Conditions: 150 mM KOAc, 10 mM MgCl2 and 150 mM bicine (pH 8.5), 24 C. Chemical mapping of a 177-nucleotide RNA with DMS and 2A3. For 2A3 the reverse transcriptase was SuperScript II with manganese. Reactivities are given for positions 27 through 126.
RNA sequence: GGGAACGACUCGAGUAGAGUCGAAAACGUGCAGCUGAUAAGUUAUGGGACGAAUACCAAUCCGACAGCGGCACAGGUCUCAGCGAAAGCAAUGACACGCGGGACAUCAGCGACACCAACUAAUCACGACUGCUCCAGAAUUCGUUCUGGAGCAGUCAAAAGAAACAACAACAACAAC
Reactivity to DMS in 0.01 (KOAc 150mM, MgCl2 10mM, bicine 150mM(pH8.5), 24C), signal-to-noise 1, nucleotides 027 to 126: c130g010u000g050c030a060g040c000u000g000a010u000a090a030g000u000u030a170u000g000g000g050a050c030g000a210a150u040a050c030c060a030a140u010c000c020g000a300c090a060g000c000g040g030c080a060c040a220g040g010u000c040u000c000a300g020c020g010a110a060a050g050c120a050a090u000g000a020c140a020c080g000c000g020g000g010a010c120a060u000c080a050g000c030g010a130c110a000c010c020a130a100c060u060a090a140u090c130a070c130
Reactivity to 2A3 in 0.01 (KOAc 150mM, MgCl2 10mM, bicine 150mM(pH8.5), 24C), signal-to-noise 1, nucleotides 027 to 126: c070g000u010g000c010a030g000c010u020g020a060u130a300a060g050u100u160a210u150g010g050g070a010c010g130a100a000u040a080c040c020a000a030u000c020c020g030a020c000a000g000c000g040g070c030a000c010a010g000g160u040c010u010c020a060g000c010g040a140a060a020g090c070a040a300u210g000a030c020a010c100g030c030g030g000g000a020c000a050u100c050a020g040c040g090a020c020a050c000c020a060a040c030u180a120a000u120c110a000c140